[RMDB]
RNA sequence: GGGAACGACUCGAGUAGAGUCGAAAAGCGAUUUGAUCAGUGUCAAUGAUGUUCAGGAGGACGAGGAGUUGAUUUUGGGACCUAAUGGAGCUCUGGUGUUUUGCAUGGAAUACCUUGUCCAAAAUCACAUACUGAGCGGAUUCGUCCGCUCAGUAUGAAAAGAAACAACAACAACAAC
Reactivity to 2A3 in 0.01 (KOAc 150mM, MgCl2 10mM, bicine 150mM(pH8.5), 24C), signal-to-noise 2, nucleotides 027 to 126: g100c030g040a070u000u040u220g040a070u060c030a030g040u030g080u100c020a040a030u090g060a040u100g120u090u120c010a040g060g020a010g020g000a040c020g040a040g040g020a020g020u030u070g060a080u020u050u050u080g020g030g030a030c020c000u090a070a110u120g050g000a040g030c010u040c040u060g050g010u030g030u020u160u060u060g050c060a030u110g000g030a000a010u020a050c020c020u040u100g000u020c000c070a010a000a030a040u060c030a030
Reactivity to DMS in 0.01 (KOAc 150mM, MgCl2 10mM, bicine 150mM(pH8.5), 24C), signal-to-noise 4, nucleotides 027 to 126: g010c060g010a120u000u000u010g010a080u010c040a060g020u010g020u000c040a050a060u010g010a090u010g010u000u010c050a090g020g010a090g010g010a080c080g000a060g000g010a110g010u000u000g010a060u000u010u000u000g020g010g000a080c050c070u000a050a080u010g010g000a110g010c080u000c080u010g000g020u000g010u000u000u000u000g010c110a070u010g010g000a070a040u000a050c030c030u000u000g010u010c010c020a030a030a050a040u000c080a150
Structure probing data (2A3 and DMS) for a 177-nucleotide construct. The DMS profile rests on 5,395 reads. For 2A3, 1,581 sequencing reads were counted. Source: RMDB library OK2TST, as collected in RNAgym.